[RMDB]
An RNA of 170 nucleotides, treated with 2A3 and DMS and read out base by base. It was measured as part of the RMDB library 15KLIB. DMS adducts were read by reverse transcription with MarathonRT. The RNA was probed in 150 mM KOAc, 10 mM MgCl2 and 150 mM bicine (pH 8.5) at 24 C. The DMS profile rests on 27,000 reads.
RNA sequence: GGGAACGACUCGAGUAGAGUCGAAAAUGGAGAUCCCAUGCCGACCCGAAGAGGAAAGGAGGACACGGACGACAAACCGUGAGUUCUAUUGCCCUUUAUUGUUGGGUGCACCCUGGGACCCAGUAAUUAGGUUGUGACUUCGGUCACAACAAAAGAAACAACAACAACAAC
Reactivity to 2A3 in 0.01 (KOAc 150mM, MgCl2 10mM, bicine 150mM(pH8.5), 24C), signal-to-noise 9, nucleotides 027 to 129: u110g020g000a100g020a150u020c000c000c000a020u040g000c010c030g080a060c010c000c000g030a050a030g040a020g020g000a040a010a020g100g030a000g000g000a000c000a000c010g020g060a020c050g030a040c150a050a110a020c000c010g010u020g050a070g060u040u010c020u050a130u090u170g070c000c000c000u070u060u080a130u070u150g090u020u040g000g000g000u040g010c020a070c040c000c020u020g010g020g000a010c000c000c000a030g030u060a030a120u120u110a090g080
Reactivity to DMS in 0.01 (KOAc 150mM, MgCl2 10mM, bicine 150mM(pH8.5), 24C), signal-to-noise 6, nucleotides 027 to 129: u040g070g000a080g000a160u040c040c010c010a150u040g000c040c080g020a090c080c050c060g000a100a030g030a050g010g020a030a120a080g000g000a000g010g030a100c010a000c040g000g000a020c110g010a130c300a120a110a040c030c030g030u040g030a120g020u040u050c000u000a050u020u030g020c100c010c010u030u030u020a030u020u000g000u000u000g020g020g050u030g020c080a120c090c000c030u050g030g000g000a000c020c010c030a080g000u060a040a130u000u000a100g050